RNA sequence: GGGAACGACUCGAGUAGAGUCGAAAAGGGCUGGUACCCGGACUAUCUGCGUGAUCCCUGGUGACUUGAUACAGUCGCUGCACACGACUAUUUCAGGAUUGCUCUGGUGUCUUCGCCGGUGGUGUCCCCCCGUUUAUAAGUUCGCUUAUAAACGGGGAAAAGAAACAACAACAACAAC
Reactivity to DMS in 0.01 (KOAc 150mM, MgCl2 10mM, bicine 150mM(pH8.5), 24C), signal-to-noise 3, nucleotides 027 to 126: g000g000g030c050u000g010g010u010a170c010c000c020g010g010a060c040u000a020u000c020u000g030c030g030u010g000a030u000c240c010c010u000g000g020u000g010a050c020u000u000g000a030u010a090c110a020g010u000c010g010c030u010g010c250a110c230a110c010g000a030c010u000a060u000u000u010c020a030g000g000a150u000u000g000c010u000c100u000g020g010u000g010u000c030u010u000c020g010c010c010g000g020u000g000g010u000g000u000c020c030
Reactivity to 2A3 in 0.01 (KOAc 150mM, MgCl2 10mM, bicine 150mM(pH8.5), 24C), signal-to-noise 3, nucleotides 027 to 126: g060g000g020c030u120g090g030u130a080c030c010c000g000g010a000c010u020a010u040c000u030g000c020g010u030g010a050u040c000c000c000u010g040g000u020g020a040c010u020u010g000a000u050a060c060a020g020u000c000g020c110u180g010c040a030c000a010c040g010a010c000u040a030u090u060u020c030a040g160g060a300u060u030g010c030u050c140u100g000g000u020g010u000c070u140u110c040g000c020c000g000g020u020g000g000u030g030u040c010c000
Structure probing data (DMS and 2A3) for a 177-nucleotide construct. DMS adducts were read by reverse transcription with MarathonRT. The RNA was probed in 150 mM KOAc, 10 mM MgCl2 and 150 mM bicine (pH 8.5) at 24 C. It was measured as part of the RMDB library RFMREP. Reactivities are given for positions 27 through 126. The 2A3 profile rests on 4,080 reads.